[RMDB]
RNA sequence: GGGAACGACUCGAGUAGAGUCGAAAAUGCGACACACACGGAGAGCAGUGGCUGGCUCGGCGUCUCGGCACGGGGAAGUGCACCGCUGGCUGCCGAGUUUGACGAGAUCUGCAUCAAUGACGGUCGGAAAUCAUAUGAACUUCGGUUCAUAUGAUUUAAAAGAAACAACAACAACAAC
Reactivity to DMS in 0.01 (KOAc 150mM, MgCl2 10mM, bicine 150mM(pH8.5), 24C), signal-to-noise 9, nucleotides 027 to 126: u020g010c020g000a040c030a080c070a180c080a100c300g000g000a210g000a090g020c010a020g010u010g010g010c030u010g000g000c010u000c010g010g000c010g010u000c010u000c030g000g000c010a030c020g010g020g020g010a110a110g000u010g010c090a100c120c030g010c140u000g000g010c040u020g030c010c000g000a020g010u000u000u010g010a060c060g000a100g000a090u010c010u000g010c020a080u000c030a030a120u020g000a140c120g000g010u000c010g000g000
Reactivity to 2A3 in 0.01 (KOAc 150mM, MgCl2 10mM, bicine 150mM(pH8.5), 24C), signal-to-noise 9, nucleotides 027 to 126: u120g020c010g020a010c020a010c000a000c000a010c210g030g010a040g000a020g030c020a020g020u040g110g050c040u030g020g000c000u010c000g000g000c010g020u010c010u010c010g010g010c010a010c030g090g010g050g080a170a090g070u060g040c070a080c020c030g060c090u030g040g000c070u130g010c010c000g000a010g000u010u030u060g030a020c010g010a010g020a130u020c010u010g000c000a060u020c010a010a100u060g030a020c040g010g010u010c000g020g020